[RMDB]
RNA sequence: GGGAACGACUCGAGUAGAGUCGAAAAUACCACUCCGUGAGUGCUUUGGUGUUCUCGCGACAUCUGAGCGCGUUUAUCAAGUGGCGAUAUUCCUCCUGGUUUUCUUGAAGGAACCGCUUAACUCCGCUGUGAAAUGCAUUGGGUUUAUCGAUGCCUCCGAAACCUAAUAGUUCGCUAUUAGGUUUCGAAAAGAAACAACAACAACAAC
Reactivity to DMS in 0.01 (KOAc 150mM, MgCl2 10mM, bicine 150mM(pH8.5), 24C), signal-to-noise 2, nucleotides 027 to 156: u000a050c030c010a050c020u010c030c070g020u000g000a090g040u000g020c000u000u000u000g000g010u010g000u000u000c030u020c300g020c020g010a040c020a030u000c010u020g000a040g020c000g040c010g010u000u010u010a120u000c090a040a020g000u020g010g010c010g030a110u000a170u010u000c010c020u010c120c050u000g010g000u000u000u000u000c030u000u010g000a120a100g000g010a050a030c020c030g020c080u000u000a050a050c020u000c030c160g040c050u000g000u000g010a120a120a120u010g020c010a080u000u000g010g010g010u000u000u000a090u000c040g000a050u000g000c040c040u000c040
Reactivity to 2A3 in 0.01 (KOAc 150mM, MgCl2 10mM, bicine 150mM(pH8.5), 24C), signal-to-noise 5, nucleotides 027 to 156: u100a010c010c000a010c010u060c100c100g090u050g080a050g010u040g020c000u030u020u050g040g010u020g020u090u030c150u090c140g060c160g010a010c010a020u010c020u030g000a010g000c020g010c010g020u050u120u060a140u090c040a060a020g010u010g020g010c030g040a020u010a090u140u020c000c010u060c000c050u100g120g000u030u030u120u080c010u030u070g080a110a050g010g020a040a050c040c020g000c020u040u050a040a020c020u020c050c030g000c030u010g020u040g170a150a110a110u170g010c020a030u030u110g020g000g020u030u060u050a080u070c020g010a010u110g030c000c010u020c000
Overview:
An RNA of 207 nucleotides, treated with DMS and 2A3 and read out base by base. 2A3 adducts were read by reverse transcription with SuperScript II with manganese. The reactions ran in a buffer of 150 mM KOAc, 10 mM MgCl2 and 150 mM bicine (pH 8.5), at 24 C. The data come from the RNA Mapping Database (RMDB), library OK3TST. As a SHAPE reagent, 2A3 marks flexible, mostly unpaired nucleotides at the ribose 2'-OH.